[RMDB]
Notes: The data come from the RNA Mapping Database (RMDB), library OK2TRN. Structure probing data (2A3 and DMS) for a 177-nucleotide construct. Values are in units of 0.01, from 0 to 300, in steps of 10. For 2A3 the reverse transcriptase was SuperScript II with manganese. The DMS profile rests on 1,027 reads. The RNA was probed in 150 mM KOAc, 10 mM MgCl2 and 150 mM bicine (pH 8.5) at 24 C.
RNA sequence: GGGAACGACUCGAGUAGAGUCGAAAACAUCCACUGCUACGGCAGUGGAUGAACGAGGUAGGUACGCCUACCUCGAAAGGAGGAUGUGUUCAUAUACAUUAAACGUCCAUGGUACGCCAUGGACGAACUGGUAUCACUCGUUCGCGAGUGAUACCAGAAAAGAAACAACAACAACAAC
Reactivity to 2A3 in 0.01 (KOAc 150mM, MgCl2 10mM, bicine 150mM(pH8.5), 24C), signal-to-noise 1, nucleotides 027 to 126: c000a020u000c000c010a010c020u000g020c000u020a070c200g090g000c020a010g030u020g010g000a000u000g010a000a020c020g000a000g010g000u000a000g010g020u020a020c110g010c030c000u000a020c000c000u010c000g010a010a010a000g160g030a040g030g020a010u060g040u010g030u160u180c040a060u130a000u040a170c020a040u030u150a120a170a060c020g020u000c000c000a000u010g010g000u040a040c210g020c060c010a000u000g000g020a000c000g000a000a000
Reactivity to DMS in 0.01 (KOAc 150mM, MgCl2 10mM, bicine 150mM(pH8.5), 24C), signal-to-noise 1, nucleotides 027 to 126: c030a000u000c010c010a030c000u000g020c010u000a130c280g010g000c000a000g020u000g080g000a010u000g000a010a110c010g030a010g000g000u000a000g000g020u000a070c210g010c070c000u010a000c030c010u000c000g020a010a010a130g030g000a150g000g010a050u000g040u000g030u010u040c230a110u000a090u020a090c060a050u010u000a050a070a180c030g030u000c000c010a010u000g000g000u000a080c290g060c000c000a010u020g000g000a000c000g000a040a020